[RMDB]
RNA sequence: GGGAACGACUCGAGUAGAGUCGAAAAUGCCACCUAUGAGCAAGAUUCUGACCCUCGACACCAUCCGAGAGGAAGCCGACCGCGAGUACGGCGCGCCGGUUCAGGUGCAGAUCUCCAAGGACACAACCGUGUCCCUCAAGAACGUGAUGCGCCUCCGUCUUAUCCGCAACUUCGGUUGCGGAUAAGAAAAAGAAACAACAACAACAAC
Reactivity to 2A3 in 0.01 (KOAc 150mM, MgCl2 10mM, bicine 150mM(pH8.5), 24C), signal-to-noise 1, nucleotides 027 to 156: u080g040c020c000a040c020c040u030a130u140g010a020g070c040a090a010g030a100u150u000c000u040g080a050c000c020c000u010c010g020a010c030a050c080c020a030u060c050c030g010a040g010a030g110g000a080a040g010c030c010g010a090c010c030g060c020g020a020g050u040a080c060g000g000c030g060c010g030c000c030g000g020u140u120c090a110g020g020u060g020c010a030g000a070u000c000u040c070c070a090a040g010g000a000c000a020c000a220a230c180c170g010u010g000u000c050c010c000u050c030a080a030g070a030a000c150g010u080g050a060u040g000c000g060c010c000u060c030c000g000